[RMDB]
Structure probing data (DMS and 2A3) for a 207-nucleotide construct.
RNA sequence: GGGAACGACUCGAGUAGAGUCGAAAAUGCAGGAACCAAGAUUUCAGGUACGUGGCCGAUUCGGCUAAGGAUUCUUGUUCAUGGCAAUGGCCCGCUUGAAAACUGCCAUUGGGCCAGGACUUACCUCAUUCAUUGUUCAGGCUGAGCUAUGCCACGACAGUAUUUCCCGAUUCGUCGGGAAAUACUGAAAAGAAACAACAACAACAAC
Reactivity to DMS in 0.01 (KOAc 150mM, MgCl2 10mM, bicine 150mM(pH8.5), 24C), signal-to-noise 2, nucleotides 027 to 156: u000g040c020a080g040g000a070a120c070c020a150a160g000a260u000u010u000c050a090g000g020u000a070c030g010u020g000g030c010c050g000a300u000u020c010g040g040c040u010a060a060g030g000a180u000u000c040u010u000g020u000u010c040a160u000g020g010c020a090a080u000g000g000c010c030c100g130c040u000u000g020a030a090a040a070c040u010g000c030c020a160u000u020g020g030g040c010c020a110g010g010a050c080u000u000a060c020c000u020c060a160u000u000c050a100u000u000g000u000u000c050a070g010g020c010u010g010a030g000c040u000a090u000g010c010c010a040c020g000a120
Reactivity to 2A3 in 0.01 (KOAc 150mM, MgCl2 10mM, bicine 150mM(pH8.5), 24C), signal-to-noise 4, nucleotides 027 to 156: u150g010c020a020g010g040a040a030c010c010a070a010g030a090u070u140u100c040a040g010g100u070a080c060g040u050g010g000c030c050g140a160u050u150c070g000g000c020u050a040a030g050g020a060u050u050c040u050u070g020u020u010c040a090u030g030g000c030a030a150u020g010g000c000c030c060g040c030u060u060g010a030a020a090a070c040u040g030c010c000a050u060u110g110g050g000c000c000a010g010g020a010c040u100u110a060c030c030u110c040a120u180u060c030a050u070u230g050u140u090c050a020g000g050c010u040g010a000g040c000u060a010u140g000c010c000a010c020g030a010
The DMS profile rests on 2,510 reads. For DMS the reverse transcriptase was MarathonRT. 2A3 adducts were read by reverse transcription with SuperScript II with manganese.